[RMDB]
Record summary
This 177-nucleotide RNA was probed chemically with 2A3 and DMS. The RNA was probed in 150 mM KOAc, 10 mM MgCl2 and 150 mM bicine (pH 8.5) at 24 C. The data come from the RNA Mapping Database (RMDB), libraries RFM100 and RFMREP. For 2A3, 2,792 sequencing reads were counted.
RNA sequence: GGGAACGACUCGAGUAGAGUCGAAAAGGUCAUCGCGCUUGGUUGAAAAGCCAGUGGCGCGAAGCUACCGUGUGCCGGAUUAUGACUGAACGCCUCUAAGUCAGAAUCCAAGCUAGCAACCGGCGCCUUUCGGAAGUGUAUUCGUACACUUCCGAAAAAAAGAAACAACAACAACAAC
Reactivity to 2A3 in 0.01 (KOAc 150mM, MgCl2 10mM, bicine 150mM(pH8.5), 24C), signal-to-noise 3, nucleotides 027 to 126: g030g000u060c010a060u050c080g010c000g000c040u100u060g020g010u030u050g030a040a050a040a000g010c010c000a130g050u100g130g000c000g010c020g010a000a000g000c010u050a030c000c030g070u090g020u030g080c020c050g000g010a010u020u050a020u070g020a000c000u030g020a140a060c080g060c050c020u020c020u070a040a000g000u000c010a020g040a000a000u020c010c000a030a020g030c060u100a010g010c020a030a090c040c000g010g000c010g010c000c000
Reactivity to DMS in 0.01 (KOAc 150mM, MgCl2 10mM, bicine 150mM(pH8.5), 24C), signal-to-noise 3, nucleotides 027 to 126: g000g020u010c080a110u000c020g020c000g020c000u000u010g010g010u000u000g000a120a060a140a070g000c000c020a040g020u020g010g030c000g010c020g000a010a090g030c090u030a090c020c030g010u010g010u000g010c050c080g000g000a020u000u000a060u000g010a010c000u020g000a140a160c100g000c020c020u000c010u000a250a030g010u010c020a010g000a040a050u000c010c020a090a150g030c140u020a090g000c040a100a070c050c020g000g000c100g020c020c050